Structure probing data (2A3 and DMS) for a 177-nucleotide construct. For DMS, 1,984 sequencing reads were counted. The RNA was probed in 150 mM KOAc, 10 mM MgCl2 and 150 mM bicine (pH 8.5) at 24 C. For 2A3, 1,399 sequencing reads were counted.
RNA sequence: GGGAACGACUCGAGUAGAGUCGAAAAGGCCCAUGAAAUUGAUGAACUGAGAGUUGCUUCCAGUCCUGAGCGCACCAUCUGGAAUUCCAGUCUGAGGUUACAAUUAGAACUCCUGACCCCAGAUUCAAGUAAGUCUUCGUUUCGACGAAGACUUACUAAAAGAAACAACAACAACAAC
Reactivity to 2A3 in 0.01 (KOAc 150mM, MgCl2 10mM, bicine 150mM(pH8.5), 24C), signal-to-noise 3, nucleotides 027 to 126: g080g020c020c040c010a000u140g060a040a090a100u160u130g060a100u050g050a060a050c030u060g000a020g010a020g160u080u040g040c020u040u000c000c000a030g020u000c000c020u050g010a010g010c010g030c010a030c000c000a020u070c020u020g000g060a030a140u180u040c010c030a000g030u000c000u010g060a070g030g000u040u080a050c000a040a070u090u050a140g010a070a010c020u010c020c060u060g070a070c000c000c000c030a060g010a040u070u150c020a030
Reactivity to DMS in 0.01 (KOAc 150mM, MgCl2 10mM, bicine 150mM(pH8.5), 24C), signal-to-noise 2, nucleotides 027 to 126: g000g000c020c000c030a110u100g030a040a060a050u020u050g000a100u000g000a070a040c010u000g030a110g000a030g000u050u000g000c050u000u000c050c040a030g010u040c070c040u050g030a230g020c090g000c030a050c000c070a030u030c020u040g000g000a120a140u080u000c030c070a040g000u000c010u010g000a140g000g000u000u020a100c150a010a070u000u040a020g040a200a110c060u030c040c000u000g000a100c050c010c030c000a020g010a050u040u050c130a070